[RMDB]
RNA sequence: GGGAACGACUCGAGUAGAGUCGAAAAUCGUCGAUCGGCUGGGCGACACCUUCCGCUGGAAGGGCGAGAAUGUCGCCACCACUCAGGUCGAAGCGGCACUGGCCUCCGACCAGACCGUCGAGGAGUGUAACCGGUACCACUUCGGUGGUACCGGUUAAAAAGAAACAACAACAACAAC
Reactivity to DMS in 0.01 (KOAc 150mM, MgCl2 10mM, bicine 150mM(pH8.5), 24C), signal-to-noise 2, nucleotides 027 to 126: u000c060g020u000c050g010a020u000c030g030g010c140u000g050g010g000c000g010a010c020a040c050c030u000u000c030c010g030c230u000g000g030a080a010g050g010g030c060g000a100g020a090a130u000g000u000c000g030c000c000a080c160c080a090c060u000c130a040g000g040u000c020g000a050a090g030c040g000g000c060a180c050u000g000g000c050c020u000c080c050g000a070c030c000a040g020a260c030c020g010u000c060g000a080g010g000a140g000u000g020
Reactivity to 2A3 in 0.01 (KOAc 150mM, MgCl2 10mM, bicine 150mM(pH8.5), 24C), signal-to-noise 1, nucleotides 027 to 126: u030c010g050u000c000g020a090u030c020g030g000c020u060g120g000g060c010g010a020c020a200c010c020u060u030c030c040g300c150u130g030g140a080a060g080g090g020c020g020a110g080a050a100u100g000u020c000g030c000c020a010c000c000a060c020u130c030a040g050g000u060c020g020a020a030g110c020g000g000c020a020c030u050g060g010c010c010u000c020c100g050a040c010c000a030g050a120c010c030g070u040c030g020a020g010g050a050g060u190g030